Source: RMDB library M2RFPK, as collected in RNAgym. The record gives the reactivity of an RNA of 207 nucleotides to 2A3 and DMS. The reactions ran in a buffer of 150 mM KOAc, 10 mM MgCl2 and 150 mM bicine (pH 8.5), at 24 C. In probing experiments dimethyl sulfate is read out at A N1 and C N3, which are open when not base-paired. For 2A3 the reverse transcriptase was SuperScript II with manganese. For DMS, 1,902 sequencing reads were counted.

[RMDB]
RNA sequence: GGGAACGACUCGAGUAGAGUCGAAAAAGCGUAGCGGUACGCCGCUACGCAAGGCGCAUUUGAACUGUAUUGUACGCCUUGCAUAAAGCAAAAGUACUAAAAGAACGUGCCGUUACGACGGCACGAAAAAACAUCCAUUGGUUCGCCAAUGGAUGAAUCAAAAGAUUAGCUUCGGCUAAUCUUUUGAAAAAGAAACAACAACAACAAC
Reactivity to 2A3 in 0.01 (KOAc 150mM, MgCl2 10mM, bicine 150mM(pH8.5), 24C), signal-to-noise 3, nucleotides 027 to 156: a000g040c010g000u000a000g010c000g000g000u040a060c260g060c040c000g030c000u000a000c000g010c000a000a000g000g000c000g000c020a110u070u050u240g100a230a090c070u110g070u200a100u200u120g010u040a020c020g000c020c000u000u010g000c020a070u100a150a080a110g020c020a020a010a020a010g020u030a020c040u130a040a090a040a020g130a090a020c020g000u000g000c000c010g000u010u070a060c190g010a020c000g060g000c010a000c000g000a000a000a010a000a000a010c000a000u000c000c000a000u000u000g000g020u040u050c140g020c120c000a000a000u000g000g000a000u000g000a000a030
Reactivity to DMS in 0.01 (KOAc 150mM, MgCl2 10mM, bicine 150mM(pH8.5), 24C), signal-to-noise 1, nucleotides 027 to 156: a070g000c010g010u000a010g050c000g000g020u000a060c200g120c030c020g030c000u010a000c000g020c010a010a000g020g020c020g000c020a030u000u000u000g010a070a190c070u010g030u000a300u010u010g010u000a040c000g000c030c000u000u010g000c020a130u000a030a100a120g000c060a020a070a120a150g020u000a180c100u000a120a160a080a100g000a040a150c010g050u000g060c000c000g020u000u000a100c300g020a170c010g030g000c000a000c000g000a000a000a050a030a030a080c000a010u000c000c000a010u000u000g000g040u000u010c300g010c000c000a000a000u010g010g020a000u000g000a040a000